[RMDB]
RNA sequence: GGGAACGACUCGAGUAGAGUCGAAAAAUCGAAUACGUCUCGUACCAAACCAUUGGCCUUUUGAACGCGCAAGCGAGUGCCACUGGCCGUGGCAAUGCCUGCAGCAUCUUGUCCACGAUGUUGCAAAGCUGGGACUAUUAUUCGUAAUAGUCCCAGCAAAAGAAACAACAACAACAAC
Reactivity to DMS in 0.01 (KOAc 150mM, MgCl2 10mM, bicine 150mM(pH8.5), 24C), signal-to-noise 3, nucleotides 027 to 126: a070u010c070g000a170a060u010a020c080g000u000c060u000c040g000u010a140c050c050a030a160a210c100c040a040u040u010g030g010c030c020u010u000u010u070g020a100a080c070g000c000g010c170a090a100g000c000g010a130g020u030g010c070c000a020c050u000g000g010c080c030g040u000g000g020c140a050a120u020g000c010c070u020g000c010a060g000c010a000u010c030u000u010g000u030c030c090a170c230g000a000u010g020u000u000g020c000a030a040a100
Reactivity to 2A3 in 0.01 (KOAc 150mM, MgCl2 10mM, bicine 150mM(pH8.5), 24C), signal-to-noise 9, nucleotides 027 to 126: a000u130c040g040a030a030u100a100c070g070u020c040u010c050g030u070a070c040c010a070a080a050c020c010a090u100u300g030g000c010c010u070u110u050u150g090a090a030c040g000c010g010c060a080a030g030c030g070a070g070u110g060c020c010a010c020u020g020g000c000c010g000u020g000g000c040a030a030u120g050c010c020u020g000c000a010g000c000a000u000c010u090u180g080u090c030c010a060c090g010a010u010g010u000u000g000c000a000a030a030